[RMDB]
RNA sequence: GGGAACGACUCGAGUAGAGUCGAAAAGAUAUGGACGUUUAACGGGAGCCUGGUCUCGGAAACGAGAUAACAGGCUUUGAUCGUUACGGACGUCCUAAGUCAAAAUCGGGCCCUUCGGGGCCCGAAACAGGAUUCUAUAGUUCGCUAUAGAAUCCUGAAAAGAAACAACAACAACAAC
Reactivity to DMS in 0.01 (KOAc 150mM, MgCl2 10mM, bicine 150mM(pH8.5), 24C), signal-to-noise 1, nucleotides 027 to 126: g000a050u010a090u010g000g000a010c000g030u000u000u000a010a000c000g020g000g000a010g020c000c000u020g000g000u000c010u000c010g010g010a030a020a070c000g000a030g000a010u000a180a260c030a010g010g020c010u000u010u010g000a050u000c010g000u000u000a120c300g000g010a050c000g040u010c010c000u000a020a130g000u000c020a100a080a180a150u000c000g030g020g050c010c010c010u010u000c220g050g050g000g010c000c000c000g000a000a020a120